[RMDB]
RNA sequence: GGGAACGACUCGAGUAGAGUCGAAAAAGGUAGGUUCGCUAUGGUGCAACUCUUUAAGGCAAUAACGAACUAAUUCUAAGCAAGUAAUGGAGAAAUGCCAGGGUCACUAUCUAGCCAUAAUAGUGCUGUAAGUGACUUAGAUUCGUCUAAGUCACAACAAUAAACGGGUAUUCGUACCCGUUUAUUGAAAAGAAACAACAACAACAAC
Reactivity to 2A3 in 0.01 (KOAc 150mM, MgCl2 10mM, bicine 150mM(pH8.5), 24C), signal-to-noise 9, nucleotides 027 to 156: a000g080g010u060a020g010g020u030u040c030g000c030u040a030u100g080g040u050g050c050a110a180c060u070c050u120u190u180a100a040g040g000c020a050a060u070a100a040c050g020a020a000c020u040a030a020u090u060c050u100a080a040g030c040a090a010g040u140a080a080u100g050g020a050g030a080a080a020u070g020c020c000a040g020g020g010u040c000a010c040u020a020u070c040u020a030g020c000c010a030u070a120a060u050a080g090u070g030c050u040g050u110a190a080g000u010g010a000c000u000u000a000g000a000u020u040c140g010u000c150u000a000a010g000u000c010a000c000a010a010
Reactivity to DMS in 0.01 (KOAc 150mM, MgCl2 10mM, bicine 150mM(pH8.5), 24C), signal-to-noise 5, nucleotides 027 to 156: a040g020g000u000a060g020g010u000u000c040g010c020u000a030u000g010g040u010g020c030a080a130c090u000c080u000u000u000a070a120g010g010c050a100a070u000a050a050c030g010a040a080c020u000a080a120u000u000c030u000a070a130g020c060a080a130g010u000a060a100u010g010g010a090g020a070a080a100u000g010c030c020a090g010g020g020u010c020a040c030u000a030u000c020u000a090g010c040c030a090u000a040a110u010a080g020u000g020c020u000g020u000a040a140g000u000g010a000c000u000u000a000g010a070u000u000c300g030u000c010u000a010a020g000u000c000a010c010a050a090
Source: RMDB library M2RFPK, as collected in RNAgym.
Structure probing data (2A3 and DMS) for a 207-nucleotide construct.
The reactions ran in a buffer of 150 mM KOAc, 10 mM MgCl2 and 150 mM bicine (pH 8.5), at 24 C.
Values cover nucleotides 27 to 156.
The DMS profile rests on 17,555 reads.